[RMDB]
RNA sequence: GGGAACGACUCGAGUAGAGUCGAAAAGAUAUGGAUGUCGUACAACGAGAUGUGUCGGAAACGACACCUCUCGUAAUCGACGAUCCUAAGUCAAAGUCAAGAGAAUGCUUCGGCAUUCUCUUGACAACGUACUGUGGCAGUUCGCUGCCACAGUACGAAAAGAAACAACAACAACAAC
Reactivity to 2A3 in 0.01 (KOAc 150mM, MgCl2 10mM, bicine 150mM(pH8.5), 24C), signal-to-noise 2, nucleotides 027 to 126: g040a020u070a070u120g020g000a010u000g020u030c010g000u090a080c060a140a040c170g010a010g000a020u000g030u000g000u030c010g030g050a060a040a050c000g000a000c000a010c000c010u000c010u000c010g000u000a000a020u040c020g000a010c080g030a040u000c000c000u040a130a050g040u040c040a100a150a010g010u020c010a000a000g010a000g030a020a010u000g000c010u130u220c300g050g000c000a000u020u000c000u040c000u000u000g000a000c010a010a000
Reactivity to DMS in 0.01 (KOAc 150mM, MgCl2 10mM, bicine 150mM(pH8.5), 24C), signal-to-noise 2, nucleotides 027 to 126: g000a060u000a300u000g010g020a010u000g000u030c000g010u000a110c300a160a010c010g020a010g010a050u000g010u000g060u000c010g010g000a080a050a130c000g000a000c000a010c000c020u000c020u000c000g000u000a030a040u030c000g000a020c000g010a030u000c000c000u000a030a150g010u010c050a110a070a180g020u000c000a000a000g000a030g010a040a020u000g010c010u010u000c220g010g000c020a010u010u010c000u020c000u010u000g030a000c000a030a040

Chemical mapping of a 177-nucleotide RNA with 2A3 and DMS.
Values cover nucleotides 27 to 126.
The reactions ran in a buffer of 150 mM KOAc, 10 mM MgCl2 and 150 mM bicine (pH 8.5), at 24 C.